RNA sequence: GGGAACGACUCGAGUAGAGUCGAAAAGAUAUGGAAUCCGGGUGACAUGAUACUUCGUGAUAAUAGAACUCGGAAACGAGUUCUAUUAUCACGAAGAAUAUCAACAGCACCCGGGAUUCCUAAGUCAGUAAGUGAAAGAGUUCGCUCUUUCACUUACAAAAGAAACAACAACAACAAC
Reactivity to DMS in 0.01 (KOAc 150mM, MgCl2 10mM, bicine 150mM(pH8.5), 24C), signal-to-noise 1, nucleotides 027 to 126: g000a080u000a300u000g000g010a010a000u000c000c000g000g030g040u000g000a100c060a200u000g000a030u010a010c000u000u000c000g020u000g000a010u020a010a040u000a000g000a020a000c000u000c000g020g000a050a090a200c020g000a000g020u000u000c000u000a000u000u000a000u000c010a000c000g010a000a000g020a070a100u010a010u000c000a010a090c290a160g030c010a000c000c010c000g010g000g010a000u000u000c000c000u000a030a140g020u000c070a150

This 177-nucleotide RNA was probed chemically with DMS.